[RMDB]
RNA sequence: GGGAACGACUCGAGUAGAGUCGAAAACCUGGCAUAUUGGUGCGCCGCCUCUGAAAGGUGCAGCGCGGAAUAAAGAUCCCAGAGCGGCUUGCCGGACCUUUGCGCGCAGCCGCUCUGACUAUUUGUUCAUCACACGAUCGUUCGCGAUCGUGUGAUGAAAAGAAACAACAACAACAAC
Reactivity to 2A3 in 0.01 (KOAc 150mM, MgCl2 10mM, bicine 150mM(pH8.5), 24C), signal-to-noise 2, nucleotides 027 to 126: c000c000u000g100g050c070a030u000a010u040u240g120g040u000g010c030g000c000c000g010c000c010u000c090u130g070a130a160a000g030g010u000g000c130a220g000c010g000c000g010g060a030a000u160a080a210a010g070a030u070c000c000c000a000g000a000g000c040g020g010c080u150u230g030c040c000g130g150a300c010c010u170u280u280g090c030g030c020g000c000a000g010c000c000g000c010u000c000u000g000a000c000u080a120u000u180u020g070u060u050